Record summary:
Chemical mapping of a 177-nucleotide RNA with DMS and 2A3. For DMS the reverse transcriptase was MarathonRT. For DMS, 24,610 sequencing reads were counted.
[RMDB]
RNA sequence: GGGAACGACUCGAGUAGAGUCGAAAAGGUCUUACGUCAGCCAUGAGAACAACGGUAUCUCUCAUGGUUGUCACAGAGAUGUGACGACGCUGACCAUCUAAGAUACCGCUUGUUAGAUGGUAAGACAUAUCAUUACCGAUUUCGAUCGGUAAUGAUAAAAAGAAACAACAACAACAAC
Reactivity to DMS in 0.01 (KOAc 150mM, MgCl2 10mM, bicine 150mM(pH8.5), 24C), signal-to-noise 9, nucleotides 027 to 126: g010g010u000c010u000u000a060c120g010u000c040a290g010c050c030a070u000g010a180g010a020a020c030a020a020c020g000g000u000a010u000c010u000c060u000c110a010u000g000g010u000u000g010u000c000a010c000a010g000a240g000a200u000g020u000g010a010c010g010a080c170g020c270u010g000a030c100c010a020u000c090u000a040a010g000a020u000a000c010c000g010c230u000u000g000u000u000a060g000a030u000g010g010u000a030a050g010a020c020a220
Reactivity to 2A3 in 0.01 (KOAc 150mM, MgCl2 10mM, bicine 150mM(pH8.5), 24C), signal-to-noise 8, nucleotides 027 to 126: g070g010u010c020u030u070a040c080g040u010c030a020g020c020c010a030u050g050a070g020a270a000c020a010a010c010g000g000u010a010u010c040u000c000u020c040a020u050g020g000u010u070g000u000c000a000c000a000g050a000g020a050u020g010u010g010a010c050g020a040c080g040c290u110g030a030c020c000a040u030c040u080a030a010g000a010u010a010c010c010g020c130u020u010g010u020u010a040g000a040u020g040g020u040a090a050g010a000c010a020